[RMDB]
Structure probing data (2A3 and DMS) for a 177-nucleotide construct. For 2A3, 4,157 sequencing reads were counted. For DMS, 3,798 sequencing reads were counted.
RNA sequence: GGGAACGACUCGAGUAGAGUCGAAAAUCUAGUGUUCCAGGAGCACGUCACCAAUAAGAACAUCGCACGUUUUGCGCUUGAAGAUCUCCUCGCAGAAUGCGCAGUGGUCGGACCAAGCCUUGGUUUAGUGCUAAUGAUCAUUCGUGAUCAUUAGCACAAAAGAAACAACAACAACAAC
Reactivity to 2A3 in 0.01 (KOAc 150mM, MgCl2 10mM, bicine 150mM(pH8.5), 24C), signal-to-noise 4, nucleotides 027 to 126: u040c010u000a050g040u010g030u150u020c020c030a050g010g050a050g000c020a020c040g050u030c050a050c040c020a030a060u170a130a070g090a030a010c010a040u060c060g050c030a020c040g020u030u020u030u040g020c040g020c040u080u080g040a060a020g060a090u080c030u010c040c000u010c020g000c010a030g030a160a050u110g000c020g000c040a010g030u010g040g000u040c040g030g030a040c020c020a040a030g070c060c020u070u060g120g000u060u040u180a050
Reactivity to DMS in 0.01 (KOAc 150mM, MgCl2 10mM, bicine 150mM(pH8.5), 24C), signal-to-noise 4, nucleotides 027 to 126: u010c050u000a070g030u010g010u010u010c020c040a070g000g010a100g000c040a040c060g010u010c080a100c070c050a090a120u000a110a070g000a050a060c030a020u000c080g040c040a050c060g010u010u010u000u000g020c040g010c160u000u020g010a080a120g000a110u000c070u000c040c080u000c020g020c020a100g010a040a030u010g010c030g000c040a070g030u010g010g010u000c010g000g010a100c090c060a040a110g030c050c050u000u000g010g030u000u000u000a110